[RMDB]
RNA sequence: GGGAACGACUCGAGUAGAGUCGAAAAAGGGCUGGAUUCGUCCAGCCCUGCACAUUCGUACGCAACGAAGCGUACGUCAUUAGGCAAAUGACGUAAAGCGUAGAACCACGGACUUCGGUCCGUGGAAGUAUCAGGGAGACUUCGGUCUCCCUGAUACAAAAGAAACAACAACAACAAC
Reactivity to 2A3 in 0.01 (KOAc 150mM, MgCl2 10mM, bicine 150mM(pH8.5), 24C), signal-to-noise 2, nucleotides 027 to 126: a000g040g000g000c000u000g000g020a020u040u070c120g070u030c070c000a000g020c000c000c000u030g000c000a020c000a070u100u090c020g030u050a020c030g000c060a110a050c070g090a120a050g050c040g080u000a000c010g010u010c000a010u030u070a040g190g000c070a080a050a030u020g020a010c010g020u020a040a050a080g010c020g040u050a050g030a090a050c000c000a000c000g000g000a010c000u030u080c170g050g000u030c000c000g000u000g020g000a010a020
Reactivity to DMS in 0.01 (KOAc 150mM, MgCl2 10mM, bicine 150mM(pH8.5), 24C), signal-to-noise 2, nucleotides 027 to 126: a020g010g010g030c000u010g010g000a020u000u000c280g020u000c010c000a000g010c000c010c000u000g000c110a040c140a250u000u000c030g000u000a050c020g000c040a060a030c120g020a050a030g020c180g010u000a010c000g000u010c000a020u000u000a130g030g010c270a080a030a010u000g000a040c010g000u000a030a020a160g000c040g000u000a060g010a090a260c010c010a000c000g000g020a000c000u000u010c160g030g000u000c000c000g010u010g000g000a010a020
Notes:
Conditions: 150 mM KOAc, 10 mM MgCl2 and 150 mM bicine (pH 8.5), 24 C. Chemical mapping of a 177-nucleotide RNA with 2A3 and DMS. For DMS, 2,104 sequencing reads were counted. DMS adducts were read by reverse transcription with MarathonRT. It was measured as part of the RMDB library M2PK50. For 2A3 the reverse transcriptase was SuperScript II with manganese.